[RMDB]
RNA sequence: GGGAACGACUCGAGUAGAGUCGAAAAGUCAGCGUUUAACUGAGUACACUAUGAUGGAUCUUGUAUAUGCCCUGAGGCACUUUGAUCAAAAUAGCGAAGUGCUUAAGGCUAUCUUAGUGAAGUAUGGAAGGCAAAGUGUUCGCACUUUGCAAAAGAAACAACAACAACAAC
Reactivity to DMS in 0.01 (KOAc 150mM, MgCl2 10mM, bicine 150mM(pH8.5), 24C), signal-to-noise 7, nucleotides 027 to 129: g030u020c030a000g020c070g050u030u020u020a110a090c050u010g020a090g040u010a100c070a040c040u000a050u050g030a080u000g040g000a060u010c080u000u000g000u010a000u000a050u020g000c070c020c010u000g020a120g000g010c040a000c000u010u000u000g040a070u030c160a110a090a070a130u060a100g030c030g030a020a010g000u000g030c000u020u020a060a040g010g030c000u010a000u020c050u020u050a040g000u030g020a100a040g000u000a050u040g000g000a100a070g000
Reactivity to 2A3 in 0.01 (KOAc 150mM, MgCl2 10mM, bicine 150mM(pH8.5), 24C), signal-to-noise 9, nucleotides 027 to 129: g060u030c030a000g020c090g030u070u110u130a060a030c020u010g040a000g050u080a020c040a010c050u050a030u090g050a000u020g040g020a030u030c030u080u080g090u070a070u010a010u190g050c040c010c020u000g020a080g000g030c000a000c000u010u000u010g050a070u170c100a080a100a090a120u120a040g040c000g010a010a000g000u000g000c000u000u040a020a010g000g000c000u000a010u000c000u000u020a020g000u020g020a060a000g040u030a070u080g100g050a050a040g080
Description:
The data come from the RNA Mapping Database (RMDB), library 15KLIB. An RNA of 170 nucleotides, treated with DMS and 2A3 and read out base by base.